Record summary
This 177-nucleotide RNA was probed chemically with 2A3 and DMS.

[RMDB]
RNA sequence: GGGAACGACUCGAGUAGAGUCGAAAAUCAUUGGCCUGUACUGGUUUGAUGUGCGCCCACAGAUUACAAACAUCCUCAACGGCAACUACGGCUGGUAGAGCGCUGUGAUUCCUAUAGUCAGUGGCCCGAGGAAUCACCUAUUCGUAGGUGAUUCCUCAAAAGAAACAACAACAACAAC
Reactivity to 2A3 in 0.01 (KOAc 150mM, MgCl2 10mM, bicine 150mM(pH8.5), 24C), signal-to-noise 3, nucleotides 027 to 126: u030c020a010u060u200g020g000c020c010u100g060u160a030c030u040g120g040u040u080u190g040a040u050g040u030g020c090g010c040c030c000a020c020a010g050a040u090u110a090c070a090a200a020c040a060u040c020c040u070c060a080a020c060g000g020c000a000a010c040u080a020c050g030g000c030u020g030g010u040a050g020a010g060c130g000c040u040g030u020g050a030u040u040c000c010u090a090u070a140g080u070c100a020g020u070g090g020c050c040c040
Reactivity to DMS in 0.01 (KOAc 150mM, MgCl2 10mM, bicine 150mM(pH8.5), 24C), signal-to-noise 3, nucleotides 027 to 126: u010c030a060u000u010g030g010c020c000u020g000u020a030c090u000g010g010u010u020u020g020a070u010g010u010g020c180g000c080c020c050a130c210a060g010a110u000u000a160c160a110a110a100c160a070u000c000c030u000c110a080a100c150g000g000c010a050a060c070u000a190c130g000g010c020u010g010g020u010a080g000a060g040c140g040c020u010g000u000g010a100u000u000c050c010u000a060u000a070g010u020c060a070g010u020g000g010c040c050c070
Conditions: 150 mM KOAc, 10 mM MgCl2 and 150 mM bicine (pH 8.5), 24 C. For DMS, 1,753 sequencing reads were counted. It was measured as part of the RMDB library OK2TST. For 2A3, 2,578 sequencing reads were counted. For DMS the reverse transcriptase was MarathonRT.